[RMDB]
The record gives the reactivity of an RNA of 207 nucleotides to 2A3. Conditions: 150 mM KOAc, 10 mM MgCl2 and 150 mM bicine (pH 8.5), 24 C.
RNA sequence: GGGAACGACUCGAGUAGAGUCGAAAAGAUUCCAGCUGGCAUUUUAAGAUAAUAUAUGAUAUGAUCAUAAGAUGAAAGUGAUUUCCACAAACCACAUUCAAAAACCAAUGCUUUUACUUUAAAGUCAUGCCAGAAAUGCUGGCCGGUUCUAGGGCUAACCUACUAGCCUGUUCGCAGGCUAGUAGGUAAAAGAAACAACAACAACAAC
Reactivity to 2A3 in 0.01 (KOAc 150mM, MgCl2 10mM, bicine 150mM(pH8.5), 24C), signal-to-noise 1, nucleotides 027 to 156: g030a020u210u020c000c000a000g000c000u000g030g000c000a060u050u040u090u130a030a190g060a070u300a300a110u060a110u050a140u190g010a060u130a110u120g040a070u100c010a030u010a140a100g100a120u030g020a100a000a000g030u030g090a070u090u040u010c010c010a040c010a030a290a040c130c020a050c060a140u130u250c000a040a150a140a000a000c030c000a150a050u070g090c020u070u040u000u040a070c010u000u060u240a020a020a020g000u030c000a010u030g030c010c000a000g010a000a000a000u060g010c000u000g010g000c000c000g120g010u000u000c030u130a060g020g010g000c000u000a010